[RMDB]
RNA sequence: GGGAACGACUCGAGUAGAGUCGAAAAAUUCGUAUUAUUGAAGAACAUCACGGCACGUCAGUUAUCCUUUCCACUUACCAUCGUCAUCUACAAAAUAAUCCUAAUACAGGAGCCUCAGAUGAGGAGCGCAAUGUGGAAGUUUCGACUUCCACAUUGCAAAAGAAACAACAACAACAAC
Reactivity to 2A3 in 0.01 (KOAc 150mM, MgCl2 10mM, bicine 150mM(pH8.5), 24C), signal-to-noise 1, nucleotides 027 to 126: a010u130u100c020g020u050a110u090u080a200u140u240g070a090a040g040a020a030c000a050u060c020a020c050g000g000c020a000c060g020u000c020a010g000u020u090a060u040c000c040u060u020u030c070c000a140c040u130u030a060c000c030a050u030c000g080u000c010a010u000c030u010a070c050a050a100a000a100u090a040a020u010c000c000u100a190a060u130a180c150a090g040g040a010g080c030c000u050c050a160g060a300u110g000a080g070g000a020g010c030
Reactivity to DMS in 0.01 (KOAc 150mM, MgCl2 10mM, bicine 150mM(pH8.5), 24C), signal-to-noise 1, nucleotides 027 to 126: a100u010u010c070g000u010a070u000u000a140u010u000g020a130a060g010a070a110c150a110u020c020a080c080g020g000c010a080c010g010u000c000a000g040u000u000a040u000c050c000u000u020u000c060c000a160c130u000u000a040c080c030a070u000c070g010u020c030a040u010c020u000a060c120a080a110a070a070u000a080a160u000c010c010u010a000a120u030a030c180a100g010g000a080g020c070c040u000c020a110g020a110u000g000a020g010g020a120g010c170